[RMDB]
RNA sequence: GGGAACGACUCGAGUAGAGUCGAAAACAAAUUCGGUAGGAAGAGGAACUUCUCCGUUCCAAAAGGCUGCUUGCACGAACAGCAGUCCGCAGUAAUAAAACAACGCUCUUCUUUAAAGACUGCUCAAGCCAUUCCUCAGCUUCGGCUGAGGAAUGGCAAAAGAAACAACAACAACAAC
Reactivity to 2A3 in 0.01 (KOAc 150mM, MgCl2 10mM, bicine 150mM(pH8.5), 24C), signal-to-noise 1, nucleotides 027 to 126: c000a000a070a150u080u100c000g170g050u010a000g100g000a010a000g000a060g160g060a050a000c000u060u050c050u000c090c050g000u000u010c000c000a000a230a000a000g000g030c000u000g000c000u000u140g000c030a000c290g000a300a000c020a060g070c000a000g000u000c000c000g000c000a010g060u080a040a180u010a130a070a030a050c090a080a130c020g010c180u040c080u060u100c210u040u090u090a120a070a000g020a070c000u070g010c040u040c080a090a000